[RMDB]
RNA sequence: GGGAACGACUCGAGUAGAGUCGAAAAUUUUGCAGCUUCUACGUACCAACGAGGAGUGCGAUUUAUUCAGCUGCCUACUACGUUAUUGGCCCAGGUUGAUGCUUCAGUUGGUGGUAAAACAGCGAUAAAUCCGUCCAGGUUUCGACCUGGACGGAUUAAAAGAAACAACAACAACAAC
Reactivity to DMS in 0.01 (KOAc 150mM, MgCl2 10mM, bicine 150mM(pH8.5), 24C), signal-to-noise 1, nucleotides 027 to 126: u000u000u000u000g020c030a060g030c070u000u010c000u000a100c000g010u000a070c190c190a090a050c010g020a080g020g000a030g060u010g010c040g000a040u010u000u000a090u000u000c120a070g020c030u000g000c080c090u000a080c070u000a110c170g040u000u000a080u000u030g010g000c000c160c080a090g000g020u000u000g000a070u010g010c040u000u000c070a100g020u000u000g010g030u020g000g000u020a040a060a140a130c060a100g010c040g000a110u000a050